An RNA of 207 nucleotides, treated with 2A3 and DMS and read out base by base. For DMS the reverse transcriptase was MarathonRT.
RNA sequence: GGGAACGACUCGAGUAGAGUCGAAAAGCUAGUCGGAGACGACUAGCAACGAUCAGUUCGCUGAUCGGAAGGUGCAUUCAAAUACGCUAGAAGCACCAAACAACGACGCCUAGCGUAAAACUGAGAAAGCAGAUAACAAAAAUAAAAAGGCGUCGGGAUUAUACGUGAUCUUCGGAUCACGUAUAAUAAAAGAAACAACAACAACAAC
Reactivity to 2A3 in 0.01 (KOAc 150mM, MgCl2 10mM, bicine 150mM(pH8.5), 24C), signal-to-noise 2, nucleotides 027 to 156: g000c000u000a000g000u010c000g060g000a060g010a130c010g030a020c000u000a000g010c000a000a000c010g000a000u000c000a000g020u080u080c100g030c090u000g000a000u000c000g000g020a120a050g000g000u010g030c080a290u000u050c020a020a060a070u060a000c010g000c010u010a030g010a040a010g020c000a000c010c000a040a020a010c030a000a040c000g000a000c000g010c000c000u020a010g010c000g020u020a020a020a080a040c030u040g010a020g180a170a140a010g150c030a000g030a070u160a140a030c110a060a120a020a060a020u230a080a100a050a010a000g020g020c000g000u000c000g010g010g000
Reactivity to DMS in 0.01 (KOAc 150mM, MgCl2 10mM, bicine 150mM(pH8.5), 24C), signal-to-noise 1, nucleotides 027 to 156: g020c000u000a000g010u000c040g000g030a300g040a300c020g000a020c000u000a050g000c000a040a010c020g000a030u000c060a000g020u000u000c300g000c040u000g010a000u000c000g010g010a050a030g000g030u000g000c020a200u000u000c060a160a040a160u000a020c010g020c010u000a160g000a150a180g000c000a030c010c010a090a080a020c050a000a060c000g000a010c000g020c010c030u000a040g010c010g000u000a110a060a120a110c000u000g000a150g020a300a140a070g010c020a020g000a230u000a130a150c050a020a060a090a150a160u000a050a150a090a110a040g000g040c000g000u000c000g010g010g020
The data come from the RNA Mapping Database (RMDB), library OK3TST.
For 2A3, 1,466 sequencing reads were counted.
The reactions ran in a buffer of 150 mM KOAc, 10 mM MgCl2 and 150 mM bicine (pH 8.5), at 24 C.